[RMDB]
RNA sequence: GGGAACGACUCGAGUAGAGUCGAAAAACGAUACAGUGGAUAAUGCACCCUGCCGUUCAGCCAUUCCGGACUGAGAUAAAACCAGUCAGCCAGUGCUGCAAGAAUCUCCCCGGUCAGAUAGUCAGUGGGAUACAUAACGUUUCGACGUUAUGUAUCCAAAAGAAACAACAACAACAAC
Reactivity to 2A3 in 0.01 (KOAc 150mM, MgCl2 10mM, bicine 150mM(pH8.5), 24C), signal-to-noise 3, nucleotides 027 to 126: a010c060g000a050u130a070c020a030g030u070g110g020a060u060a260a020u210g010c020a050c010c000c020u010g050c000c020g030u030u010c040a040g020c040c010a050u090u020c020c020g060g000a020c030u100g050a050g030a190u170a090a060a010a080c020c000a010g040u060c000a010g020c040c020a080g040u070g080c020u000g010c030a060a040g070a050a050u000c020u010c020c020c000c000g000g040u060c020a030g030a170u080a050g090u070c040a000g060u150g070
Reactivity to DMS in 0.01 (KOAc 150mM, MgCl2 10mM, bicine 150mM(pH8.5), 24C), signal-to-noise 4, nucleotides 027 to 126: a090c090g010a110u020a050c080a070g010u000g010g000a100u010a060a060u010g010c110a080c020c020c010u000g000c050c030g020u000u000c070a080g010c010c020a110u000u000c030c060g010g010a040c050u010g010a080g000a100u000a070a070a130a180c110c020a030g020u000c050a120g020c040c060a070g010u010g020c030u000g020c100a070a060g000a100a060u010c060u000c030c100c000c070g000g010u000c070a050g000a100u000a070g010u000c060a060g020u020g000
Structure probing data (2A3 and DMS) for a 177-nucleotide construct. The data come from the RNA Mapping Database (RMDB), library OK2TST. For DMS the reverse transcriptase was MarathonRT. The DMS profile rests on 3,229 reads.